The record gives the reactivity of an RNA of 177 nucleotides to DMS and 2A3. The DMS profile rests on 1,758 reads.

RNA sequence: GGGAACGACUCGAGUAGAGUCGAAAACUGUUUUCUGCGCUUAACCCCGUCUUCCAAUAAUUGGAAAAAUGCAGUGCAUUGCACUUGAUUGCACAACUCCUCGUCAGCGUUAGGGAACGGACUGCAUACAGCUGAGAGUAUUCGUACUCUCAGCUGUAAAAGAAACAACAACAACAAC
Reactivity to DMS in 0.01 (KOAc 150mM, MgCl2 10mM, bicine 150mM(pH8.5), 24C), signal-to-noise 2, nucleotides 027 to 126: c030u030g000u000u000u060u000c000u000g020c000g000c020u000u030a110a180c110c000c000c030g010u030c040u000u040c000c010a010a160u000a120a080u020u000g020g000a060a060a060a090a090u060g010c010a010g030u010g020c000a120u010u000g000c050a050c130u040u070g000a100u000u030g000c000a030c100a130a200c130u000c030c000u010c050g000u040c030a090g030c040g120u000u010a000g010g000g000a080a150c030g000g030a050c090u010g030c130a170u000
Reactivity to 2A3 in 0.01 (KOAc 150mM, MgCl2 10mM, bicine 150mM(pH8.5), 24C), signal-to-noise 7, nucleotides 027 to 126: c010u010g040u010u000u040u020c010u020g010c010g010c040u050u120a100a100c000c020c000c020g100u020c080u030u010c010c000a060a150u170a300a180u230u120g030g030a010a020a000a000a020u190g030c050a010g020u000g000c030a120u020u240g040c060a030c130u080u200g070a050u060u130g010c010a010c020a040a090c030u030c020c000u030c030g120u060c060a010g000c010g030u060u170a040g010g030g000a000a020c020g020g030a040c020u070g030c010a040u010
2A3 adducts were read by reverse transcription with SuperScript II with manganese.
The RNA was probed in 150 mM KOAc, 10 mM MgCl2 and 150 mM bicine (pH 8.5) at 24 C.